[RMDB]
RNA sequence: GGGAACGACUCGAGUAGAGUCGAAAAUGACCCCACGGCGCUAGCGGUCCUCGUGGUCUUCCAGGCCUAGCCGCCAUACACCCGCCCCCCACCGGCUUCCAACCACCCCAGCAGCACCUCUUCGGGCGUUAAACUGGGCUUUCGAGCCCAGUUUAACAAAAGAAACAACAACAACAAC
Reactivity to DMS in 0.01 (KOAc 150mM, MgCl2 10mM, bicine 150mM(pH8.5), 24C), signal-to-noise 1, nucleotides 027 to 126: u060g010a140c090c050c020c020a060c080g000g000c070g000c040u000a100g070c020g010g000u010c020c030u000c030g050u080g000g000u000c010u080u080c040c120a150g000g000c060c020u000a060g030c120c010g040c020c020a170u000a210c120a020c170c130c020g000c130c000c000c010c000c000a040c040c040g010g000c010u000u020c090c030a070a000c200c040a120c020c000c040c080a160g060c050a080g040c030a100c000c000u010c030u000u050c060g060g000g000c090
This 177-nucleotide RNA was probed chemically with DMS.
The RNA was probed in 150 mM KOAc, 10 mM MgCl2 and 150 mM bicine (pH 8.5) at 24 C.
The data come from the RNA Mapping Database (RMDB), library RFM100.
For DMS the reverse transcriptase was MarathonRT.